[RMDB]
An RNA of 177 nucleotides, treated with 2A3 and read out base by base.
RNA sequence: GGGAACGACUCGAGUAGAGUCGAAAAGCCAGGAUCGGCGGCACGAACGUCUCGAUGAUGUGGAUCGGUCCCAUCAGGUUGAUCGCGACCACGUUGCUCCACUGGUCGUGGGUGAGUCGGUCAACAGGAGCGGAUCAGCAUUCGUGCUGAUCCGCUCAAAAGAAACAACAACAACAAC
Reactivity to 2A3 in 0.01 (KOAc 150mM, MgCl2 10mM, bicine 150mM(pH8.5), 24C), signal-to-noise 2, nucleotides 027 to 126: g100c000c000a080g000g080a060u000c020g030g020c000g080g010c000a000c090g100a240a000c020g050u000c050u060c130g110a130u070g020a010u030g120u250g040g000a030u080c090g050g090u100c000c000c000a050u040c020a030g000g110u040u040g000a040u050c010g000c000g020a040c000c000a010c050g070u040u160g100c040u120c050c040a040c120u030g000g000u010c020g000u010g010g000g090u100g060a020g060u200c000g000g000u010c020a020a010c000a040g020

Annotation
The RNA was probed in 150 mM KOAc, 10 mM MgCl2 and 150 mM bicine (pH 8.5) at 24 C.